[RMDB]
RNA sequence: GGGAACGACUCGAGUAGAGUCGAAAAUCCUAAGUCAGGAAACACUAGCUUGGAUUUAGCACAGGGAGCUAGUCGGAAACGACUAGCGAGGAUCUGUGCUUGUCAGCUAGUGCACUCCUGAUAUGGAAAAAGGAGGCACUGUUCGCAGUGCCUCCAACACUUGUGGCUUGUUCGCAAGCCACAAGUGAAAAGAAACAACAACAACAAC
Reactivity to 2A3 in 0.01 (KOAc 150mM, MgCl2 10mM, bicine 150mM(pH8.5), 24C), signal-to-noise 1, nucleotides 027 to 156: u040c010c000u040a090a040g020u000c000a010g000g030a000a010a140c000a000c010u000a010g060c030u090u190g240g000a130u300u230u120a000g000c030a000c000a000g010g010g020a020g010c000u000a000g010u020c000g020g020a090a060a060c000g000a000c000u000a000g000c010g020a040g000g000a000u000c000u000g000u010g020c000u000u000g000u000c000a010g000c000u000a000g000u010g000c010a000c010u000c000c000u010g000a000u000a040u120g010g050a010a040a040a070a090g020g000a000g000g000c020a000c000u010g010u140u150c300g020c170a020g000u000g000c000c010u000c020c000a000a000

Conditions: 150 mM KOAc, 10 mM MgCl2 and 150 mM bicine (pH 8.5), 24 C. Chemical mapping of a 207-nucleotide RNA with 2A3. Reactivities are given for positions 27 through 156.